[RMDB]
RNA sequence: GGGAACGACUCGAGUAGAGUCGAAAAUAGGCCAUGUUCGCAUGGCCUAAAAAAACCUUUGUGUGACUCAUAAGACAGAAUUUAUCAGCCCAUUGGGCUGAUAAUUCAAUGACGUGACUCACACUCUGGUAAAAAGGCAAAUCUUCGGAUUUGCCAAGCUAACAAGUCCGUUCGCGGACUUGUUAGCAAAAGAAACAACAACAACAAC
Reactivity to 2A3 in 0.01 (KOAc 150mM, MgCl2 10mM, bicine 150mM(pH8.5), 24C), signal-to-noise 1, nucleotides 027 to 156: u090a010g000g000c040c000a000u020g020u030u100c300g000c170a010u010g030g000c000c020u010a000a000a000a000a000a000a000c010c000u040u010u010g000u000g000u000g000a000c040u000c010a020u030a150a070g100a170c080a080g070a040a060u150u190u090a010u050c010a010g000c000c090c190a210u150u300g050g000g000c030u020g000a000u000a000a000u010u000c020a000a260u070g020a040c030g020u010g000a000c000u010c000a010c000a000c000u000c000u000g030g000u060a080a130a050a050a000g010g000c000a000a000a000u000c000u030u120c300g100g000a010u020u000u010g000c020c000a000a000
Record summary
The data come from the RNA Mapping Database (RMDB), library RNAMAK. This 207-nucleotide RNA was probed chemically with 2A3. The RNA was probed in 150 mM KOAc, 10 mM MgCl2 and 150 mM bicine (pH 8.5) at 24 C.